[RMDB]
RNA sequence: GGGAACGACUCGAGUAGAGUCGAAAACUGUGAUAACACCUGAGGGGGUGCAUCGCCGAGGUGAUUGAACGGCUGGCCACGUUCAUCAUCGGCUACAGGGGCUGAAUCCCCUGGGUUGUCACCAGAACAAAUAGCUCCGUUUCGACGGAGCUAUUUGAAAAGAAACAACAACAACAAC
Reactivity to DMS in 0.01 (KOAc 150mM, MgCl2 10mM, bicine 150mM(pH8.5), 24C), signal-to-noise 2, nucleotides 027 to 126: c030u000g000u000g010a030u000a020a030c050a100c020c040u040g010a040g000g020g000g010g030u010g000c040a020u000c020g010c000c010g000a120g010g010u000g000a010u000u010g030a000a000c010g020g010c030u000g010g000c030c040a090c000g000u010u000c000a010u000c000a030u010c010g010g030c130u030a060c180a110g000g000g000g000c160u000g000a080a060u000c000c000c000c000u000g000g000g010u000u000g000u000c020a010c010c140a100g010a120a170
Reactivity to 2A3 in 0.01 (KOAc 150mM, MgCl2 10mM, bicine 150mM(pH8.5), 24C), signal-to-noise 5, nucleotides 027 to 126: c010u010g010u010g010a010u020a050a030c120a210c130c050u090g240a110g000g010g000g000g010u050g020c020a050u060c060g050c070c010g050a060g000g040u030g010a030u040u150g000a010a000c010g020g000c020u080g090g020c030c020a050c010g000u000u000c000a000u000c000a000u000c000g030g010c010u050a030c030a060g050g010g030g000c020u050g020a030a040u050c000c000c000c000u000g000g000g000u000u010g000u000c000a020c040c020a040g060a080a020

An RNA of 177 nucleotides, treated with DMS and 2A3 and read out base by base. For DMS the reverse transcriptase was MarathonRT. The RNA was probed in 150 mM KOAc, 10 mM MgCl2 and 150 mM bicine (pH 8.5) at 24 C.